Annotation:
The record gives the reactivity of an RNA of 207 nucleotides to 2A3. High 2A3 reactivity points to a flexible backbone, as in loops and unpaired stretches.
RNA sequence: GGGAACGACUCGAGUAGAGUCGAAAAGGGGUCUCGAGGGAGAGGUACAGCUUUUGACGAGCUGAAGCCUCCACGGCUCGAUAAGCUGUACUCCCCACCUCCCUCCGAGACGGAGGCACCCAAAAGUAGGGUAGAUGGUUCGCCAUCUACCCUACAACGUAUUCUGUCGGUUCGCCGACAGAAUACGAAAAGAAACAACAACAACAAC
Reactivity to 2A3 in 0.01 (KOAc 150mM, MgCl2 10mM, bicine 150mM(pH8.5), 24C), signal-to-noise 2, nucleotides 027 to 156: g060g030g080g000u020c000u010c010g000a000g000g000g000a000g010a030g040g010u020a010c000a020g000c020u090u220u290u260g250a180c120g000a000g010c000u020g020a050a020g020c000c010u000c010c010a010c010g000g000c000u000c010g060a120u060a300a010g000c000u000g000u000a010c000u000c020c020c000c000a000c000c000u000c010c000c000u020c030c170g020a010g010a010c040g000g000a010g000g010c010a040c010c000c020a000a140a040a020g010u010a000g000g000g020u000a000g000a000u010g050g000u000u100c160g070c020c000a000u020c000u000a000c010c000c000u000a000c000a010a000

Overview:
Values cover nucleotides 27 to 156. The RNA was probed in 150 mM KOAc, 10 mM MgCl2 and 150 mM bicine (pH 8.5) at 24 C. For 2A3, 2,220 sequencing reads were counted.